[RMDB]
RNA sequence: GGGAACGACUCGAGUAGAGUCGAAAAAUGGCGCGACGACAAGUGCGCGCAACGAUUCCGCUUCCGACGCACAUAUGUCCAUGGCACGCAGGAAGCGAAUCCGGGACUCUCAACCCCCAUCGGGAGAAAGUAAUUCGAAGUUCGCUUCGAAUUACUUAAAAGAAACAACAACAACAAC
Reactivity to 2A3 in 0.01 (KOAc 150mM, MgCl2 10mM, bicine 150mM(pH8.5), 24C), signal-to-noise 8, nucleotides 027 to 126: a000u130g070g010c000g000c000g020a030c010g040a100c110a230a070g070u160g180c010g000c000g010c000a010a020c030g010a010u010u020c090c050g000c000u000u000c020c040g100a200c080g060c070a060c030a080u160a080u200g160u060c110c040a050u070g010g020c070a010c120g020c040a050g020g000a000a010g030c000g000a000a000u000c020c020g040g020g020a040c010u000c000u000c020a060a120c000c020c000c010c020a070u070c050g030g010g000a020g010a020
Reactivity to DMS in 0.01 (KOAc 150mM, MgCl2 10mM, bicine 150mM(pH8.5), 24C), signal-to-noise 6, nucleotides 027 to 126: a070u040g020g030c000g010c010g010a040c020g020a210c300a100a120g020u020g020c000g000c000g010c020a070a020c170g000a040u000u010c050c040g000c000u000u000c020c000g010a190c170g020c110a110c070a050u010a110u040g010u040c150c180a060u010g010g030c080a080c150g010c180a190g000g000a010a020g010c000g000a010a000u000c000c130g010g010g000a110c030u000c010u000c020a110a140c020c020c000c010c070a120u030c110g000g020g000a080g000a160